[RMDB]
Structure probing data (2A3 and DMS) for a 207-nucleotide construct.
Reactivities are given for positions 27 through 156.
DMS adducts were read by reverse transcription with MarathonRT.
Conditions: 150 mM KOAc, 10 mM MgCl2 and 150 mM bicine (pH 8.5), 24 C.
The data come from the RNA Mapping Database (RMDB), library OK3TST.

RNA sequence: GGGAACGACUCGAGUAGAGUCGAAAACUGGGGUUAAAGAAAGCAUGUUGUUUGUACGGAGUACUCUAGGAGACAUCUAUGAGCACUCCGUAGUCAGUUGUAUUGCUUUGUUUAGUUCAACUGUUUGGCUUUAUUGUACAGAGUACACCCCAGCCACUACCUAUUCUAUUUUCGAAUAGAAUAGGUAAAAAGAAACAACAACAACAAC
Reactivity to 2A3 in 0.01 (KOAc 150mM, MgCl2 10mM, bicine 150mM(pH8.5), 24C), signal-to-noise 3, nucleotides 027 to 156: c020u000g020g000g000g020u060u090a060a070a080g040a040a070a010g020c050a030u120g010u010u040g030u040u080u120g040u010a000c000g000g000a010g000u020a010c000u000c010u000a030g050g080a170g100a130c050a110u100c030u040a040u260g010a010g000c010a000c000u000c000c000g000u000a010g020u010c000a000g000u010u010g050u080a080u090u080g030c010u130u090u130g130u130u200u040a020g000u000u060c000a030a010c000u010g060u070u040u120g090g000c000u030u060u050a100u190u070g010u010a020c040a130g180a040g160u010a010c000a020c030c000c000c000a020g010c000c000a030c030
Reactivity to DMS in 0.01 (KOAc 150mM, MgCl2 10mM, bicine 150mM(pH8.5), 24C), signal-to-noise 4, nucleotides 027 to 156: c000u000g000g010g010g030u000u000a030a050a100g010a070a050a070g030c020a090u010g010u000u000g020u010u010u000g030u000a020c000g010g000a000g050u000a010c000u010c020u000a240g020g010a240g020a160c300a090u000c000u010a080u000g000a030g010c010a000c000u000c000c000g010u000a010g020u000c080a080g030u000u000g020u000a120u000u000g010c030u010u000u000g020u000u010u000a050g020u000u010c040a040a050c050u000g010u000u000u000g010g030c020u010u000u000a070u030u000g010u000a140c080a170g020a180g010u000a070c080a160c000c000c000c000a040g010c010c070a080c120